[RMDB]
RNA sequence: GGGAACGACUCGAGUAGAGUCGAAAAACGUCAUAAAAGUCAGUAACACCCGAAGCCGGUGGCCUAACCCCUUGUGGAAGGGAGCCGUCGAGGGUGGGAUCGGCGAUUGGGACGAAGUCGUGGCGAGAAUUAUUUUAAUAUUCGUAUUAAAAUAAUUAAAAGAAACAACAACAACAAC
Reactivity to DMS in 0.01 (KOAc 150mM, MgCl2 10mM, bicine 150mM(pH8.5), 24C), signal-to-noise 4, nucleotides 027 to 126: a110c010g000u000c000a050u010a030a020a050a300g000u000c010a050g020u020a200a190c010a020c010c000c000g000a130a180g000c150c000g000g020u000g000g010c000c010u000a010a060c000c000c000c050u010u010g010u020g000g000a010a030g010g000g000a300g010c020c020g000u000c000g000a210g000g000g030u010g000g000g010a030u010c100g000g000c000g000a150u010u000g000g010g000a030c020g000a090a110g000u000c040g000u010g000g010c060g000a160g000
Reactivity to 2A3 in 0.01 (KOAc 150mM, MgCl2 10mM, bicine 150mM(pH8.5), 24C), signal-to-noise 2, nucleotides 027 to 126: a000c010g000u020c010a010u090a080a070a010a000g010u030c050a000g040u040a060a000c000a010c000c030c000g000a030a000g020c010c020g000g030u060g090g130c010c000u010a030a040c020c000c010c030u080u230g070u280g080g000a010a030g030g010g000a000g020c010c000g000u000c000g000a000g000g000g000u000g000g000g000a050u040c030g010g000c000g010a000u000u050g060g070g020a010c010g010a060a040g110u090c030g100u070g080g100c060g040a080g110